[RMDB]
RNA sequence: GGGAACGACUCGAGUAGAGUCGAAAAGAUAUGGAGCUAUGUGGGAGCAACAGCUGGGAUCGGAAACGAUCCCAGACAUGCUCAGCAUGAGCUCCUAAGUCAAAAGGUUGCUGUUCGCAGCAACCAACUAAGGCUUAGGGUUCGCCCUAAGCCUUAGAAAAGAAACAACAACAACAAC
Reactivity to 2A3 in 0.01 (KOAc 150mM, MgCl2 10mM, bicine 150mM(pH8.5), 24C), signal-to-noise 2, nucleotides 027 to 126: g060a000u110a050u190g000g000a000g040c030u010a050u020g090u070g130g300g020a030g000c030a030a230c060a190g080c010u000g000g040g000a000u000c000g000g040a080a060a040c010g020a010u030c000c000c000a010g000a000c000a030u030g010c010u020c010a000g000c000a000u210g100a000g000c010u020c000c000u010a020a010g050u010c040a030a050a110a200g020g000u010u010g000c000u030g050u110u100c300g000c240a000g020c020a010a000c020c000a010a000
Reactivity to DMS in 0.01 (KOAc 150mM, MgCl2 10mM, bicine 150mM(pH8.5), 24C), signal-to-noise 3, nucleotides 027 to 126: g010a050u010a300u000g000g010a020g020c000u000a010u000g020u010g000g030g000a020g010c000a060a110c300a180g020c010u000g000g000g000a000u000c000g000g000a130a050a240c050g020a000u000c000c000c000a000g000a010c060a160u010g010c000u010c000a300g000c000a010u000g010a020g010c010u000c000c000u000a010a100g000u010c030a050a120a160a200g000g010u000u000g000c010u010g000u010u010c250g020c000a010g000c000a020a010c000c000a000a060
The record gives the reactivity of an RNA of 177 nucleotides to 2A3 and DMS. The DMS profile rests on 2,204 reads. Reactivities are given for positions 27 through 126. For DMS the reverse transcriptase was MarathonRT. The RNA was probed in 150 mM KOAc, 10 mM MgCl2 and 150 mM bicine (pH 8.5) at 24 C.